[RMDB]
RNA sequence: GGGAACGACUCGAGUAGAGUCGAAAAGGAAAUAUGCUUAAGCCUCAAUUAAGCUUGCCUUGAGUGCCUCAAGCAGAAAAUAUAGACUGAAACAUUUAGUAUGGGCAAGCAGGGAGCAAUAAAAAAAUGAUCGUAACUAAUUCGUUAGUUACGAUCAAAAAGAAACAACAACAACAAC
Reactivity to DMS in 0.01 (KOAc 150mM, MgCl2 10mM, bicine 150mM(pH8.5), 24C), signal-to-noise 3, nucleotides 027 to 126: g010g010a080a090a110u000a110u010g000c000u000u000a050a100g010c010c010u010c050a070a090u000u010a090a110g030c010u000u000g000c020c020u000u010g000a040g000u000g000c070c030u000c120a050a050g000c030a090g010a050a050a070a080u000a080u000a080g020a180c040u000g000a100a100a080c050a060u010u000u010a100g010u000a120u010g010g000g000c000a010a000g020c000a090g000g000g010a050g020c120a080a030u050a000a010a020a090a060a110a110
Reactivity to 2A3 in 0.01 (KOAc 150mM, MgCl2 10mM, bicine 150mM(pH8.5), 24C), signal-to-noise 2, nucleotides 027 to 126: g100g020a090a100a010u190a030u100g000c000u040u020a030a000g010c000c000u040c030a040a070u060u060a130a030g010c000u010u000g020c020c000u010u010g030a030g010u080g010c020c000u080c060a010a040g010c010a030g140a030a100a010a000u230a010u030a060g100a060c010u060g030a160a090a000c010a020u130u160u050a030g010u040a100u110g050g000g000c000a000a000g000c010a000g010g030g000a060g030c070a090a170u180a180a060a010a000a000a000a070
An RNA of 177 nucleotides, treated with DMS and 2A3 and read out base by base. For DMS the reverse transcriptase was MarathonRT. The reactions ran in a buffer of 150 mM KOAc, 10 mM MgCl2 and 150 mM bicine (pH 8.5), at 24 C. The DMS profile rests on 3,175 reads. For 2A3, 2,124 sequencing reads were counted.